[RMDB]
RNA sequence: GGGAACGACUCGAGUAGAGUCGAAAAUGAAGGGGACCCCCGAUCCUAAUAAGGCGGAAUAAGGGCACCAUACAAUAGCAGCAUCGACGGAGGGGGACGUUAAUUGUCGACGUAAGAAUCUCGUGAAGUGGUCAUCUAUGUUCGUGUAGGUGGUUGCAAAAGAAACAACAACAACAAC
Reactivity to 2A3 in 0.01 (KOAc 150mM, MgCl2 10mM, bicine 150mM(pH8.5), 24C), signal-to-noise 9, nucleotides 027 to 126: u090g020a040a040g030g010g010g070a080c010c000c000c000c010g010a080u020c010c010u050a110a100u140a120a020g040g010c010g020g030a040a040u110a030a040g020g000g000c030a040c020c020a020u070a120c050a040a020u060a050g040c050a000g000c000a050u050c040g060a050c020g030g020a030g040g010g000g010g010a010c020g000u020u070a070a060u140u090g060u070c030g010a020c010g010u010a030a000g040a030a040u010c030u010c040g040u050g040a070a020
Reactivity to DMS in 0.01 (KOAc 150mM, MgCl2 10mM, bicine 150mM(pH8.5), 24C), signal-to-noise 9, nucleotides 027 to 126: u030g010a120a080g010g010g000g000a170c030c020c010c010c010g010a120u020c010c010u010a100a080u030a100a080g000g010c040g000g000a100a060u030a090a110g010g000g000c080a070c050c040a070u020a070c140a070a070u020a080g010c060a070g000c040a060u010c060g000a070c070g000g000a070g000g000g000g000g010a050c050g000u010u010a050a100u020u020g010u010c050g010a030c040g000u010a070a080g010a090a090u010c020u000c040g010u010g000a060a080
This 177-nucleotide RNA was probed chemically with 2A3 and DMS. The reactions ran in a buffer of 150 mM KOAc, 10 mM MgCl2 and 150 mM bicine (pH 8.5), at 24 C. For DMS the reverse transcriptase was MarathonRT. The DMS profile rests on 132,065 reads. Source: RMDB library OK1LIB, as collected in RNAgym.